[RMDB]
Structure probing data (DMS and 2A3) for a 177-nucleotide construct. The data come from the RNA Mapping Database (RMDB), library M2PK50. The RNA was probed in 150 mM KOAc, 10 mM MgCl2 and 150 mM bicine (pH 8.5) at 24 C. Reactivities are given for positions 27 through 126. For DMS, 1,383 sequencing reads were counted. For DMS the reverse transcriptase was MarathonRT.
RNA sequence: GGGAACGACUCGAGUAGAGUCGAAAAAAGGACUGGUUCGCCAGUCCUUAUUCAUUCGUACGCAACGAAGCGUAAGUCAUUAGGCAAAUGACUAAAAGCGUAUACGAAAGGACUUCGGUCCUUUCAACUUGAAUGCGGAAUUCGUUCCGCAUUCAAGAAAAGAAACAACAACAACAAC
Reactivity to DMS in 0.01 (KOAc 150mM, MgCl2 10mM, bicine 150mM(pH8.5), 24C), signal-to-noise 2, nucleotides 027 to 126: a000a000g000g000a020c010u000g000g020u000u010c260g050c010c000a010g010u000c000c010u010u010a010u000u000c060a210u010u000c090g010u010a030c010g000c050a070a070c070g030a060a090g000c140g000u000a070a050g010u000c010a000u000u010a090g040g010c250a080a070a000u000g010a010c020u000a040a060a110a100g000c010g010u000a040u010a080c180g020a000a010a010g000g000a000c000u000u000c150g010g010u000c000c000u000u010u000c000a050a090
Reactivity to 2A3 in 0.01 (KOAc 150mM, MgCl2 10mM, bicine 150mM(pH8.5), 24C), signal-to-noise 1, nucleotides 027 to 126: a010a000g000g000a020c010u010g050g000u040u050c030g010c040c010a010g000u000c010c000u000u000a000u000u000c020a000u020u020c020g030u020a010c040g000c050a120a040c070g130a140a080g140c040g050u030a040a030g000u020c000a020u010u070a040g160g060c070a070a020a020u010g000a020c000u060a000a020a090a020g050c000g010u040a030u030a110c070g010a010a000a000g010g010a000c010u040u040c220g000g000u000c000c020u000u010u000c000a000a000